[RMDB]
RNA sequence: GGGAACGACUCGAGUAGAGUCGAAAAAUGGUGAAUAUUCAUUGAUCAAAUCAGUCACUCCACCAAAAUAUGAUGGAUCUUUUGAAUAACUGAUUAAUCAGACGAGAAUAAAGAUAGAGUCCCAUUCACUUAAUAGGCGGUUCGCCGCCUAUUAAGUAAAAGAAACAACAACAACAAC
Reactivity to DMS in 0.01 (KOAc 150mM, MgCl2 10mM, bicine 150mM(pH8.5), 24C), signal-to-noise 2, nucleotides 027 to 126: a010u020g030g010u010g020a140a180u000a010u010u010c020a090u010u000g000a020u000c110a030a030a050u000c000a010g000u010c070a090c230u000c000c000a020c020c010a040a100a120a060u020a110u010g000a010u010g000g010a010u010c060u010u020u020u000g030a100a150u000a070a040c000u000g000a030u010u010a190a060u000c010a010g000a100c280g000a130g010a050a010u010a030a030a090g010a150u000a090g000a120g000u010c000c000c000a130u020u010c060
Reactivity to 2A3 in 0.01 (KOAc 150mM, MgCl2 10mM, bicine 150mM(pH8.5), 24C), signal-to-noise 2, nucleotides 027 to 126: a020u120g040g020u070g030a080a040u030a030u090u050c040a060u020u060g010a020u030c070a030a050a020u020c000a000g060u040c010a010c130u010c000c000a000c040c010a000a030a000a280u230a150u130g010a010u020g000g000a020u000c010u000u160u120u250g090a040a030u100a090a040c000u000g010a000u030u010a000a020u020c030a020g080a120c070g080a050g070a300a050u070a020a170a010g070a030u090a070g090a010g080u000c020c000c000a030u090u080c030

Structure probing data (DMS and 2A3) for a 177-nucleotide construct. The RNA was probed in 150 mM KOAc, 10 mM MgCl2 and 150 mM bicine (pH 8.5) at 24 C. DMS adducts were read by reverse transcription with MarathonRT. The 2A3 profile rests on 903 reads. It was measured as part of the RMDB library RFMREP.